[RMDB]
RNA sequence: GGGAACGACUCGAGUAGAGUCGAAAAACUGCCUUGGAAUCAGCCGAUGAUUCACUUUUUGACGCUCCUCCCGUAAUGCUGGACGAGGCCGAUUUGCUGGGAAGCGAACGAUUGGACUCUUCGGUAACCCUAAUACGGUGUUCGCACCGUAUUAGGGAAAAGAAACAACAACAACAAC
Reactivity to DMS in 0.01 (KOAc 150mM, MgCl2 10mM, bicine 150mM(pH8.5), 24C), signal-to-noise 3, nucleotides 027 to 126: a150c090u010g010c040c030u010u010g020g000a100a060u010c050a110g000c100c070g000a100u010g010a020u010u000c010a120c080u000u010u000u000u000g030a290c080g000c040u000c030c010u000c010c020c020g010u010a040a060u010g000c080u010g000g010a060c150g030a080g000g020c010c030g000a060u000u000u000g010c020u010g010g030g000a120a010g030c010g010a040a060c190g010a130u000u000g010g000a030c040u000c010u000u000c020g010g000u000a110a150
Reactivity to 2A3 in 0.01 (KOAc 150mM, MgCl2 10mM, bicine 150mM(pH8.5), 24C), signal-to-noise 2, nucleotides 027 to 126: a000c040u080g060c020c020u040u060g150g030a080a030u070c020a020g090c020c080g060a090u030g000a010u020u040c020a220c070u090u050u010u040u110g060a040c000g000c020u050c010c010u020c030c000c000g000u030a080a060u100g060c050u050g000g010a020c070g030a050g030g040c000c000g020a070u010u020u030g040c030u060g000g050g020a020a010g000c000g000a040a030c050g040a050u040u020g030g000a010c020u030c000u020u020c000g000g020u040a130a140